Conditions: 150 mM KOAc, 10 mM MgCl2 and 150 mM bicine (pH 8.5), 24 C. This 177-nucleotide RNA was probed chemically with DMS and 2A3.
[RMDB]
RNA sequence: GGGAACGACUCGAGUAGAGUCGAAAAGAAGACGUGACGAAAAGUCACGAAAAGAGCUAUUAAGGUUCGAGUAGCAAAGAAAAGAAAACGAACUAAAAGAAAAGAGAUCGGAGACGAUCUCAAAAGAGGUGGAUCAUUAUUUCGAUAAUGAUCCACCAAAAGAAACAACAACAACAAC
Reactivity to DMS in 0.01 (KOAc 150mM, MgCl2 10mM, bicine 150mM(pH8.5), 24C), signal-to-noise 2, nucleotides 027 to 126: g000a170a100g030a230c040g000u000g000a000c000g000a080a030a140a210g020u000c000a010c040g010a070a030a200a060g000a230g030c000u000a010u040u000a070a070g020g000u000u000c000g040a270g030u000a030g000c000a100a120a110g000a060a020a040a080g000a000a040a130a060c020g000a000a020c000u010a070a080a230a100g010a050a150a170a080g000a000g000a000u000c000g030g050a130g000a210c040g000a000u000c000u020c000a020a050a090a080g020a110
Reactivity to 2A3 in 0.01 (KOAc 150mM, MgCl2 10mM, bicine 150mM(pH8.5), 24C), signal-to-noise 4, nucleotides 027 to 126: g160a030a010g120a040c010g000u000g000a000c010g030a130a040a000a200g020u010c000a000c000g010a000a000a010a010g080a010g000c030u030a020u090u080a250a070g030g000u010u000c000g000a020g000u060a000g030c100a070a190a020g120a080a150a050a010g130a020a120a000a010c050g000a010a000c000u030a060a020a100a030g150a030a080a030a020g000a020g000a000u010c010g000g000a050g010a040c010g000a000u000c000u000c000a020a030a000a010g060a010
Source information:
DMS adducts were read by reverse transcription with MarathonRT.